[RMDB]
RNA sequence: GGGAACGACUCGAGUAGAGUCGAAAAUGAAGAAACUGUAACAUUGCUUGAACAACAGGGUGCAAAAGCAUUUGCAAUGCAUUGUGACGUAGGCAACCCUGAAAAUGUCACAAAUUUGGCUGAAACAACUCAUGCCUAAUUUCGAUUAGGCAUGAGUAAAAGAAACAACAACAACAAC
Reactivity to 2A3 in 0.01 (KOAc 150mM, MgCl2 10mM, bicine 150mM(pH8.5), 24C), signal-to-noise 2, nucleotides 027 to 126: u110g030a000a100g070a050a200a010c080u050g030u120a030a020c000a040u030u090g010c020u060u080g110a070a010c040a040a010c010a040g050g010g000u030g020c020a040a000a070a100g000c010a040u010u040u190g050c060a110a050u030g050c010a040u040u000g030u020g030a020c030g010u020a030g030g060c040a090a090c000c030c000u010g000a020a010a000a040u070g000u000c000a010c040a080a070a060u200u200u080g050g000c020u090g030a040a030a030c040a050
Reactivity to DMS in 0.01 (KOAc 150mM, MgCl2 10mM, bicine 150mM(pH8.5), 24C), signal-to-noise 3, nucleotides 027 to 126: u010g010a110a110g030a170a140a140c110u000g010u010a080a100c050a040u020u010g020c030u010u000g020a120a080c160a060a190c060a010g000g010g010u010g000c040a030a040a110a150g010c040a090u000u000u000g010c030a070a160u010g000c040a110u010u010g000u000g000a020c040g000u000a060g000g010c070a060a100c030c000c010u000g000a030a030a040a020u000g020u000c020a030c040a040a060a130u000u010u000g020g000c070u000g010a110a080a120c120a090
Chemical mapping of a 177-nucleotide RNA with 2A3 and DMS. 2A3 adducts were read by reverse transcription with SuperScript II with manganese. For 2A3, 1,935 sequencing reads were counted.